Notes: Structure probing data (DMS and 2A3) for a 207-nucleotide construct. Source: RMDB library OK3TST, as collected in RNAgym.

RNA sequence: GGGAACGACUCGAGUAGAGUCGAAAACGAGAACAUGACCACUGAAAAGCCUAAUCCUAUUGUACAAGACCCUGGAAGUGAUCCUUCACCAACGCAGCAUGAAGAUGUGACCACAGCGGAGACUAAAUCGACCGACGGGGUGAAGUUUUUCGGAUCAGUAUGAUAUGUUAUUCGUAACAUAUCAUACAAAAGAAACAACAACAACAAC
Reactivity to DMS in 0.01 (KOAc 150mM, MgCl2 10mM, bicine 150mM(pH8.5), 24C), signal-to-noise 3, nucleotides 027 to 156: c100g020a160g000a100a100c050a090u000g000a080c020c040a140c090u000g000a090a080a050a070g010c030c040u000a120a070u000c040c020u000a070u000u000g000u020a090c060a130a120g000a070c030c030c010u000g010g020a130a100g000u000g000a080u000c050c000u010u010c030a060c060c030a040a130c070g000c100a110g020c050a110u010g000a050a100g000a100u010g010u000g000a110c040c040a080c050a110g030c030g010g000a200g020a180c030u010a070a080a300u000c040g010a090c060c020g020a120c030g020g010g000g000u000g010a060a170g000u030u000u000u000u000c040g010g030a090u020c060a190
Reactivity to 2A3 in 0.01 (KOAc 150mM, MgCl2 10mM, bicine 150mM(pH8.5), 24C), signal-to-noise 6, nucleotides 027 to 156: c040g020a010g060a090a010c010a050u100g050a040c010c030a030c080u070g020a040a050a030a030g040c010c020u040a050a040u030c020c010u060a100u140u160g030u070a070c030a100a060g030a130c020c020c010u030g040g030a070a030g040u020g060a050u040c010c000u010u050c030a050c060c050a100a080c080g020c050a030g000c030a040u060g030a040a030g050a060u080g030u070g070a050c020c020a040c030a050g040c030g030g020a030g010a030c010u090a080a050a110u050c040g090a110c040c000g030a060c040g010g000g000g010u010g020a040a020g000u040u010u010u030u050c010g000g020a040u070c010a010
For DMS, 6,092 sequencing reads were counted. For 2A3, 5,595 sequencing reads were counted. The reactions ran in a buffer of 150 mM KOAc, 10 mM MgCl2 and 150 mM bicine (pH 8.5), at 24 C.